RNA sequence: GGGAACGACUCGAGUAGAGUCGAAAAGAUAUGGACAUGCGGUGGAGCUGGUCGGAAACGACACAGCUAUGAAGCCGUAUGUCCUAAGUCAAAGGAUCUGUGACAACUUCGGUUGUCACAGAUCCAAGAUCACAAUGAAGUUCGCUUCAUUGUGAUCAAAAGAAACAACAACAACAAC
Reactivity to DMS in 0.01 (KOAc 150mM, MgCl2 10mM, bicine 150mM(pH8.5), 24C), signal-to-noise 6, nucleotides 027 to 126: g010a030u000a300u000g010g010a010c000a000u000g010c000g000g000u000g010g000a010g020c000u000g000g010u000c000g000g000a070a070a210c000g010a000c000a080c010a010g010c000u000a100u010g010a160a250g000c000c000g010u000a000u000g010u000c000c000u000a000a050g010u000c040a070a140a120g000g010a010u000c000u000g010u000g000a000c010a000a020c000u000u020c190g030g010u000u010g000u000c000a000c000a010g000a000u000c000c000a010a040
Reactivity to 2A3 in 0.01 (KOAc 150mM, MgCl2 10mM, bicine 150mM(pH8.5), 24C), signal-to-noise 3, nucleotides 027 to 126: g030a000u060a030u140g000g010a000c000a010u010g000c000g020g000u040g030g000a010g020c010u010g000g010u000c000g010g030a060a100a050c020g020a010c130a000c010a300g010c010u090a300u060g020a020a000g000c000c010g000u000a000u000g000u000c000c000u010a000a000g000u000c000a040a030a060g000g000a000u010c010u010g000u010g030a000c010a020a000c010u060u140c250g100g000u000u010g000u000c000a000c000a000g000a000u010c010c010a000a000
Chemical mapping of a 177-nucleotide RNA with DMS and 2A3. As a SHAPE reagent, 2A3 marks flexible, mostly unpaired nucleotides at the ribose 2'-OH. DMS (dimethyl sulfate) methylates the pairing face of unpaired adenines and cytosines.